[RMDB]
RNA sequence: GGGAACGACUCGAGUAGAGUCGAAAAUCUGGUUUGUCUCGCAAUUGCCAAAAACGCGAUCCGGAAAAAUGCUGCGCCGCACGAUCCAGGCGAUUUGCGAAGGACGCGAUCCUGGAGAUCUGACGACCUUUUAGUACCGGUUCGCCGGUACUAAAAGAAAAGAAACAACAACAACAAC
Reactivity to 2A3 in 0.01 (KOAc 150mM, MgCl2 10mM, bicine 150mM(pH8.5), 24C), signal-to-noise 1, nucleotides 027 to 126: u010c010u050g000g080u090u120u170g060u070c020u000c030g000c030a040a130u070u010g000c000c040a150a090a030a030a040c030g060c060g070a210u030c040c000g030g000a060a070a030a030a030u130g000c020u040g020c030g000c070c000g060c010a040c070g030a010u100c030c010a010g030g020c010g040a050u170u050u200g000c010g020a010a010g040g020a000c040g040c030g090a040u010c000c000u040g030g020a070g020a100u000c050u080g060a080c080g030a040c000
Reactivity to DMS in 0.01 (KOAc 150mM, MgCl2 10mM, bicine 150mM(pH8.5), 24C), signal-to-noise 2, nucleotides 027 to 126: u010c090u010g000g000u000u000u000g020u000c050u000c040g020c060a140a090u000u000g030c030c050a070a070a050a130a130c160g010c050g000a050u000c020c010g000g000a010a050a110a120a120u000g010c020u000g000c050g000c020c000g040c130a070c140g020a110u010c040c110a180g010g010c080g010a050u000u020u010g020c030g000a120a080g010g000a060c030g020c060g000a060u000c040c070u000g000g010a100g010a050u000c040u000g000a130c040g000a100c060
Description:
This 177-nucleotide RNA was probed chemically with 2A3 and DMS. The reactions ran in a buffer of 150 mM KOAc, 10 mM MgCl2 and 150 mM bicine (pH 8.5), at 24 C. The DMS profile rests on 1,599 reads.